An RNA of 177 nucleotides, treated with DMS and 2A3 and read out base by base. Values cover nucleotides 27 to 126.

[RMDB]
RNA sequence: GGGAACGACUCGAGUAGAGUCGAAAAUAAUUUUCAUCCUACACCGUUAGAUCGAGAAAUGGACGUUCGAGAUUCGUCCACGUCACCAUGAGUUAAAAUUUAACUCUCAGUAAAUUUUAACUCAUGACAACUGACACAUGUUCGCAUGUGUCAGUUGAAAAGAAACAACAACAACAAC
Reactivity to DMS in 0.01 (KOAc 150mM, MgCl2 10mM, bicine 150mM(pH8.5), 24C), signal-to-noise 2, nucleotides 027 to 126: u010a070a090u000u000u000u030c050a090u010c020c000u010a090c120a210c120c060g020u000u000a070g010a100u010c050g010a130g000a030a070a080u010g000g010a020c020g010u000u000c070g020a170g000a210u000u020c010g020u000c000c010a060c180g030u010c060a100c170c000a010u000g000a020g010u010u000a000a000a010a010u000u000u000a040a130c090u000c210u010c190a080g000u000a010a010a000u000u000u000u000a000a000c000u000c010a010u000g010a180
Reactivity to 2A3 in 0.01 (KOAc 150mM, MgCl2 10mM, bicine 150mM(pH8.5), 24C), signal-to-noise 2, nucleotides 027 to 126: u020a030a060u040u030u050u120c050a060u010c000c020u010a030c040a040c050c040g100u050u080a020g010a220u120c040g050a000g030a180a110a050u060g000g020a000c030g000u030u080c100g100a060g050a300u040u080c010g010u000c000c000a010c020g010u020c020a040c080c010a010u000g000a010g010u000u010a000a000a000a000u000u000u000a120a020c030u020c020u060c080a000g010u010a000a010a000u000u000u000u000a020a000c000u020c000a000u010g000a010
The 2A3 profile rests on 1,839 reads. For DMS, 1,319 sequencing reads were counted.